This 177-nucleotide RNA was probed chemically with 2A3 and DMS. Reactivities are given for positions 27 through 126.

RNA sequence: GGGAACGACUCGAGUAGAGUCGAAAACGCAGCGGGAUGUUCAGCGCCUGCUUGGUCACGCCGAGCAGGGCCAGCAGUUCCUUCACGCUGAGGCCCGGAUAGCGGGCGAUGAAGAACAGCACGCGGAAUCAGCCUGAUGAUUCGUCAUCAGGCUGAUAAAAGAAACAACAACAACAAC
Reactivity to 2A3 in 0.01 (KOAc 150mM, MgCl2 10mM, bicine 150mM(pH8.5), 24C), signal-to-noise 1, nucleotides 027 to 126: c060g000c010a010g020c000g000g020g010a010u030g020u010u040c010a010g020c010g000c020c000u020g000c030u000u000g030g020u110c120a040c200g080c010c010g000a010g000c000a010g030g000g000c060c000a030g000c000a000g000u020u000c030c020u050u060c170a180c040g000c000u000g010a030g040g050c000c040c030g060g120a190u140a080g080c000g000g000g030c010g010a070u170g040a050a210g050a060a030c050a040g050c030a000c020g070c010g040g050a010
Reactivity to DMS in 0.01 (KOAc 150mM, MgCl2 10mM, bicine 150mM(pH8.5), 24C), signal-to-noise 2, nucleotides 027 to 126: c060g000c040a030g020c030g020g000g020a020u000g000u000u000c060a090g000c010g020c020c000u000g010c010u010u000g000g000u010c220a160c270g000c010c000g030a010g020c010a010g000g010g000c180c020a050g000c000a040g000u010u000c050c060u000u010c020a100c010g000c000u000g000a050g000g010c020c010c000g010g020a120u010a130g010c020g020g010g000c020g000a050u010g020a140a100g010a080a110c190a120g010c010a050c040g010c010g000g020a160
For DMS the reverse transcriptase was MarathonRT. It was measured as part of the RMDB library OK2TRN.